An RNA of 207 nucleotides, treated with 2A3 and read out base by base. The RNA was probed in 150 mM KOAc, 10 mM MgCl2 and 150 mM bicine (pH 8.5) at 24 C. For 2A3 the reverse transcriptase was SuperScript II with manganese. Source: RMDB library OK3TST, as collected in RNAgym.

[RMDB]
RNA sequence: GGGAACGACUCGAGUAGAGUCGAAAAGCAGUUUCACUCACGAUAGACACUUGAGGAAGUGUGUCAGUAUUGCUUCCUCAAGCAAUACAUUACGGUAUGCCAAUACUGUAAUUGACAGCAGAUUGGCAUCUGCUCUAUCUCAUGAAACUGGUGAGUCGCAUCCCUGCUGAUUCGUCAGCAGGGAUGCAAAAGAAACAACAACAACAAC
Reactivity to 2A3 in 0.01 (KOAc 150mM, MgCl2 10mM, bicine 150mM(pH8.5), 24C), signal-to-noise 1, nucleotides 027 to 156: g050c020a000g000u000u000u010c000a040c060u050c040a000c080g000a010u000a000g000a000c010a000c000u000u000g020a050g000g020a000a000g000u060g030u010g020u060c010a080g140u070a150u190u090g010c000u020u030c000c010u050c050a000a000g000c010a010a010u110a100c080a120u120u110a020c050g070g000u020a020u030g030c040c000a020a020u040a260c070u000g000u090a040a150u130u240g070a050c060a070g010c040a000g000a020u040u080g040g090c040a000u000c000u020g010c020u000c000u020a010u020c010u020c040a010u140g030a040a000a000c000u000g000g030u040g040a010g080u010c080